[RMDB]
RNA sequence: GGGAACGACUCGAGUAGAGUCGAAAAUUGUUAGGAAAUGCUGCCCCAGUGAUCAGUGAAUCAUAGGCAUGUGAAUCUAUGAGAAGGAAACAGAGAUAGUAAGUGAUAUGCUAUCACUCCCUGAUCAAUGAGUACCUCCGUUCGCGGAGGUACUCAUAAAAGAAACAACAACAACAAC
Reactivity to DMS in 0.01 (KOAc 150mM, MgCl2 10mM, bicine 150mM(pH8.5), 24C), signal-to-noise 1, nucleotides 027 to 126: u000u020g030u000u020a140g000g000a080a180a030u010g000c070u010g040c030c020c050c040a080g000u000g030a030u000c020a060g000u060g010a130a050u000c000a010u000a060g020g030c170a110u000g010u010g030a160a100u000c020u000a010u050g010a030g020a120a010g000g010a050a100a120c170a010g000a220g020a020u010a010g010u000a050a060g000u010g010a080u000a150u000g010c020u000a000u010c010a070c020u000c080c060c000u000g000a060u000c010a060